[RMDB]
RNA sequence: GGGAACGACUCGAGUAGAGUCGAAAAAAGCUUCAACGCCUUUUUUUCCUAUCUUCUUUAGCACCGGGCUAGGGAGUAAGCCCGUGGAACCUUAGUCUUGUUCCCUCGGGACUUACUUGUGGUUCCUGUGGUGCACUCCUGACCCUGCUGCUUUGAAUCUAUUCGUCUUCUUCGGAAGACGAAUAGAAAAAGAAACAACAACAACAAC
Reactivity to 2A3 in 0.01 (KOAc 150mM, MgCl2 10mM, bicine 150mM(pH8.5), 24C), signal-to-noise 1, nucleotides 027 to 156: a000a010g100c140u300u260c160a230a040c100g010c010c070u080u060u080u020u000u050u060c050c010u100a220u080c050u110u070c010u060u160u110a030g030c030a030c040c020g060g000g000c080u080a080g040g020g010a000g010u090a070a010g040c000c000c000g000u030g000g000a000a000c000c000u000u010a000g020u020c060u120u060g020u070u100c010c000c000u040c140g100g000g000a000c000u000u030a000c030u040u030g080u120g120g000u000u000c000c020u040g160u210g020g000u080g050c050a030c020u010c000c020u000g080a130c030c000c010u000g000c010u000g010c000u040u020u110g100a080a050

This 207-nucleotide RNA was probed chemically with 2A3. It was measured as part of the RMDB library VIROID. The 2A3 profile rests on 571 reads. 2A3 adducts were read by reverse transcription with SuperScript II with manganese. Values cover nucleotides 27 to 156. Conditions: 150 mM KOAc, 10 mM MgCl2 and 150 mM bicine (pH 8.5), 24 C.